The data come from the RNA Mapping Database (RMDB), library OK2TRN.
This 177-nucleotide RNA was probed chemically with 2A3 and DMS.
The reactions ran in a buffer of 150 mM KOAc, 10 mM MgCl2 and 150 mM bicine (pH 8.5), at 24 C.
Values are in units of 0.01, from 0 to 300, in steps of 10.
For 2A3, 5,028 sequencing reads were counted.
[RMDB]
RNA sequence: GGGAACGACUCGAGUAGAGUCGAAAAGCUGCCUCUGACGUCCUUAAGGGUGGUAAAGCGGGUCUCCCCCGGAAACCGGGGCGCGCCUGGCGCUUGCACGGGUAUGCGUGGCGGUCGACCCUGGCCGCGAUACUCCACGAUUCGUCGUGGAGUAUCGAAAAGAAACAACAACAACAAC
Reactivity to 2A3 in 0.01 (KOAc 150mM, MgCl2 10mM, bicine 150mM(pH8.5), 24C), signal-to-noise 4, nucleotides 027 to 126: g020c010u020g040c000c010u050c050u070g060a050c020g080u070c020c010u120u140a110a150g070g000g030u070g020g050u090a140a080a000g040c030g000g040g010u030c070u050c010c010c000c000c010g030g030a220a100a050c090c010g000g040g020g000c030g000c020g020c000c020u030g130g020c030g020c020u030u130g000c030a060c080g100g000g000u100a050u180g020c040g020u080g040g010c030g010g020u050c010g070a190c000c000c030u020g020g000c000c000g050
Reactivity to DMS in 0.01 (KOAc 150mM, MgCl2 10mM, bicine 150mM(pH8.5), 24C), signal-to-noise 5, nucleotides 027 to 126: g010c050u000g000c020c010u000c070u010g010a130c100g000u000c030c010u000u000a150a140g010g010g020u000g010g010u010a030a070a090g010c050g010g010g000u010c050u010c100c010c000c010c010g010g000a060a120a130c080c020g010g010g010g020c070g030c230g010c030c030u000g010g010c040g010c050u000u010g020c050a080c120g010g000g020u000a040u010g010c010g010u000g020g010c030g000g010u010c040g010a130c040c020c020u000g000g000c020c030g000